RNA sequence: GGGAACGACUCGAGUAGAGUCGAAAACACCUCCGGAACGCCAUCGACGAACUCGGCCUCGAAGUCGUCGAACACGACCUGCCCGAUGCGAGUGCGGGUGUCGGGGGCGUCGAAUGAGCCGGCGGGGUCACUAGGGCUAGUUCGCUAGCCCUAGUGAAAAAGAAACAACAACAACAAC
Reactivity to 2A3 in 0.01 (KOAc 150mM, MgCl2 10mM, bicine 150mM(pH8.5), 24C), signal-to-noise 6, nucleotides 027 to 126: c070a070c000c010u050c000c010g010g040a150a080c040g030c060c000a010u010c010g000a000c000g000a030a010c000u000c010g030g010c000c020u090c100g030a070a020g010u020c010g010u020c100g040a050a030c060a000c020g020a020c000c040u090g030c010c000c000g060a060u170g070c060g070a080g150u250g080c010g020g000g010u030g000u000c000g000g000g000g010g000c000g000u010c000g020a100a140u060g000a010g050c030c010g030g040c020g000g010g010g020
Reactivity to DMS in 0.01 (KOAc 150mM, MgCl2 10mM, bicine 150mM(pH8.5), 24C), signal-to-noise 2, nucleotides 027 to 126: c060a100c050c000u000c010c000g000g000a110a060c060g000c140c030a060u000c000g000a010c000g000a040a010c000u000c000g000g010c010c030u030c130g000a100a080g010u000c010g000u000c130g040a110a220c170a010c000g000a020c030c040u030g000c020c030c010g000a060u050g000c200g000a110g010u040g000c010g000g010g020u000g020u000c010g010g000g000g000g010c010g010u020c000g000a080a050u010g010a130g020c000c030g000g010c040g040g020g000g040